RNA sequence: GGGAACGACUCGAGUAGAGUCGAAAAUAGACGACCUUGCAGCAGCGGGUGCGCGUGCAGAGAAGGCCACUGACAAGCUUUCUAAGACUACUACUGAUUGGGCUGCUGAGCAGCAGAAGGCCAAUGCUCGCGCGAGCGAGAUGGAGCAUGCGGAUGCGACCCGAAGGGUAUUCGUACCCUUCGGGUCAAAAGAAACAACAACAACAAC
Reactivity to 2A3 in 0.01 (KOAc 150mM, MgCl2 10mM, bicine 150mM(pH8.5), 24C), signal-to-noise 1, nucleotides 027 to 156: u100a000g050a030c030g060a050c020c000u040u130g000c060a120g000c000a010g030c010g010g080g000u100g040c080g020c000g030u070g040c010a030g020a010g040a220a020g010g020c020c070a040c060u040g050a050c030a080a090g000c030u050u060u030c030u030a080a040g030a020c010u050a020c020u010a020c040u120g040a180u070u050g000g010g010c010u000g010c070u070g080a000g040c040a000g000c020a000g020a160a020g130g000c000c000a040a030u050g020c010u010c000g020c000g000c020g010a020g000c010g030a040g010a050u050g020g020a060g010c060a030u050g010c010g030g020a030u120g060c040
Reactivity to DMS in 0.01 (KOAc 150mM, MgCl2 10mM, bicine 150mM(pH8.5), 24C), signal-to-noise 1, nucleotides 027 to 156: u000a050g020a110c050g020a060c050c000u000u000g060c020a110g030c010a110g080c060g040g000g040u010g000c040g020c030g010u040g020c000a160g030a180g020a050a150g030g000c010c000a220c040u000g000a160c070a040a160g010c020u000u000u020c020u010a050a190g000a130c010u000a090c060u000a160c030u000g010a090u000u000g020g040g010c040u020g000c040u000g020a050g030c030a110g020c050a060g000a110a050g010g000c030c000a070a140u000g000c020u020c000g020c050g040c300g020a090g000c030g000a050g040a160u000g000g010a090g160c030a090u010g000c080g020g020a100u020g060c170